[RMDB]
RNA sequence: GGGAACGACUCGAGUAGAGUCGAAAAUGGACCGCCUUACGGACGGCGUGCCUGACCGGCGUUGCGCACCGCAAGAUGGCCGUGCCCAUCGACCUGCCCUCCGGCCAGCAACUCGUACUUACCGCGGCCUGUUAGUGCCUUUCGAGGCACUAACAGGAAAAGAAACAACAACAACAAC
Reactivity to DMS in 0.01 (KOAc 150mM, MgCl2 10mM, bicine 150mM(pH8.5), 24C), signal-to-noise 2, nucleotides 027 to 126: u030g020g000a100c070c050g020c010c050u040u020a080c150g000g010a040c170g000g000c060g000u060g010c000c000u010g000a150c080c020g020g030c140g000u010u000g000c090g010c050a080c070c050g000c170a040a030g000a020u040g000g000c010c100g030u040g000c080c020c000a030u010c070g000a080c120c020u010g010c000c020c030u000c010c030g020g040c050c030a080g000c030a070a070c070u010c040g020u000a080c060u000u020a050c020c000g000c040g000g000
Reactivity to 2A3 in 0.01 (KOAc 150mM, MgCl2 10mM, bicine 150mM(pH8.5), 24C), signal-to-noise 4, nucleotides 027 to 126: u110g040g020a060c010c000g000c020c010u110u090a070c080g050g030a050c040g040g000c050g040u130g060c020c000u030g050a060c000c000g010g000c040g060u100u060g000c050g000c040a050c030c010g000c050a010a050g040a070u080g030g000c030c070g040u080g020c000c000c000a020u020c020g060a120c000c030u040g000c000c000c000u000c010c010g030g020c010c000a020g010c020a060a050c020u040c040g070u070a100c030u070u050a030c040c030g010c010g040g030

Chemical mapping of a 177-nucleotide RNA with DMS and 2A3. The RNA was probed in 150 mM KOAc, 10 mM MgCl2 and 150 mM bicine (pH 8.5) at 24 C. It was measured as part of the RMDB library OK1LIB. DMS adducts were read by reverse transcription with MarathonRT. Values cover nucleotides 27 to 126.